[RMDB]
RNA sequence: GGGAACGACUCGAGUAGAGUCGAAAAUACUUGCUGAUCCAUCCCGGUAUCCAGCCAUGUGGACUGUUACCGGUCUGGCUAUCGAGAAUCGGCUGCGGUGGGUUCUUGGUCAUGUCGUAGCUGACCAUGCUGGAUGAGCAUUCGUGCUCAUCCAGCAAAAAGAAACAACAACAACAAC
Reactivity to DMS in 0.01 (KOAc 150mM, MgCl2 10mM, bicine 150mM(pH8.5), 24C), signal-to-noise 2, nucleotides 027 to 126: u000a110c070u000u000g010c130u000g000a080u000c050c030a050u000c070c020c000g010g000u000a020u010c230c050a010g030c020c030a200u010g010u000g020g030a090c040u000g000u000u000a050c010c050g010g010u000c030u000g010g000c100u000a060u000c040g010a050g000a060a110u000c030g000g030c010u000g020c040g010g020u000g010g000g000u020u000c120u030u000g020g010u000c050a050u000g010u000c100g000u000a050g000c010u000g000a050c030c040a150
Reactivity to 2A3 in 0.01 (KOAc 150mM, MgCl2 10mM, bicine 150mM(pH8.5), 24C), signal-to-noise 2, nucleotides 027 to 126: u040a010c030u050u090g000c020u060g050a040u070c000c010a000u000c030c000c000g040g010u010a040u010c070c030a000g090c010c010a180u300g080u270g040g080a150c000u060g010u060u020a010c030c030g010g010u000c010u000g010g030c030u030a040u030c050g010a040g020a080a040u060c070g080g050c030u020g000c020g020g010u090g010g070g030u040u070c060u150u130g050g030u050c010a080u040g080u020c050g070u040a050g010c030u020g000a030c000c010a000

Source information
The record gives the reactivity of an RNA of 177 nucleotides to DMS and 2A3. DMS adducts were read by reverse transcription with MarathonRT. For DMS, 1,590 sequencing reads were counted. The reactions ran in a buffer of 150 mM KOAc, 10 mM MgCl2 and 150 mM bicine (pH 8.5), at 24 C.